Structure probing data (2A3 and DMS) for a 207-nucleotide construct. DMS adducts were read by reverse transcription with MarathonRT. 2A3 is a SHAPE reagent: it acylates the 2'-hydroxyl of flexible nucleotides of all four kinds. For 2A3 the reverse transcriptase was SuperScript II with manganese. The RNA was probed in 150 mM KOAc, 10 mM MgCl2 and 150 mM bicine (pH 8.5) at 24 C.
RNA sequence: GGGAACGACUCGAGUAGAGUCGAAAAGAUUCUGCGUUCGCGCAGAAUCAAAAAACCGUAGGUACGACGAAGUGGGACCUCGGCGCUUCGAAAGAGGCGAACUACCGAGCCCACAGAGUACCUAAACGGAAAAAAUGUCGCUGUUCGCAGCGACAAACAAUACGUUAAGGUUCGCCUUAACGUAUUGAAAAGAAACAACAACAACAAC
Reactivity to 2A3 in 0.01 (KOAc 150mM, MgCl2 10mM, bicine 150mM(pH8.5), 24C), signal-to-noise 3, nucleotides 027 to 156: g000a010u010u020c000u010g010c000g050u030u090c300g000c000g010c090a010g000a000a010u020c020a030a010a000a020a000a030c010c010g010u010a010g000g000u000a020c070g030a040c050g050a300a020g000u000g000g000g030a040c010c050u010c000g000g010c000g000c000u010u000c000g040a090a060a030g010a000g010g010c000g030a050a010c030u070a040c030c000g000a000g000c000c010c010a000c010a000g000a000g000u000a000c000c000u020a080a070a010c030g000g040a050a050a020a020a000a040u070g000u000c000g000c000u010g030u050u090c250g020c100a000g000c000g010a000c040a000a010a000
Reactivity to DMS in 0.01 (KOAc 150mM, MgCl2 10mM, bicine 150mM(pH8.5), 24C), signal-to-noise 2, nucleotides 027 to 156: g010a030u000u000c000u000g030c000g030u010u000c300g010c020g000c000a030g010a000a010u010c000a000a020a080a100a030a090c020c000g010u000a020g020g000u010a000c010g030a300c100g000a170a210g050u000g000g000g000a070c200c040u000c020g020g000c040g000c010u000u000c000g000a110a120a280g000a020g000g010c000g010a080a100c050u020a120c020c010g020a080g000c000c000c000a020c000a030g000a300g000u000a010c010c000u000a010a030a110c020g090g000a000a030a070a060a150a140u000g000u000c000g030c000u010g010u000u010c300g030c000a060g010c000g030a030c000a000a030a070